Structure probing data (2A3 and DMS) for a 177-nucleotide construct. Source: RMDB library TTRDEL, as collected in RNAgym. For DMS, 2,665 sequencing reads were counted. The reactions ran in a buffer of 150 mM KOAc, 10 mM MgCl2 and 150 mM bicine (pH 8.5), at 24 C.
RNA sequence: GGGAACGACUCGAGUAGAGUCGAAAAGAUAUGGAGUAUCAUAGGCUCUAAGACAGUCGGAAACGAUCGAGAGCCUAUGAGUACUCCUAAGUCUAAACCACUUUGUGACUUCGGUCACAAAGUGGAACAUAAGACGACACUUCGGUGUCGUCUUAUGAAAAGAAACAACAACAACAAC
Reactivity to 2A3 in 0.01 (KOAc 150mM, MgCl2 10mM, bicine 150mM(pH8.5), 24C), signal-to-noise 2, nucleotides 027 to 126: g040a010u070a030u190g010g000a010g010u000a000u050c010a010u000a000g000g010c000u000c000u040a070a080g130a050c060a070g100u070c010g010g030a100a070a050c020g010a030u090c030g040a010g000a000g050c060c040u000a000u000g000a000g000u010a000c000u000c000c010u010a020a010g010u020c020u080a100a060a150c000c000a010c020u030u020u010g020u000g010a000c000u000u070c300g120g000u000c020a000c020a000a000a010g000u000g000g000a000a000
Reactivity to DMS in 0.01 (KOAc 150mM, MgCl2 10mM, bicine 150mM(pH8.5), 24C), signal-to-noise 4, nucleotides 027 to 126: g010a000u000a300u000g000g000a020g000u000a020u000c010a010u000a010g000g000c000u000c020u030a270a090g030a110c300a090g000u000c000g000g000a160a070a170c000g000a020u000c080g010a020g010a000g000c000c010u010a000u000g000a030g000u000a010c000u010c010c000u000a010a060g010u000c000u010a100a120a210c000c000a000c000u000u000u000g010u000g000a010c000u000u010c190g020g000u000c000a000c000a000a000a000g010u000g020g000a010a070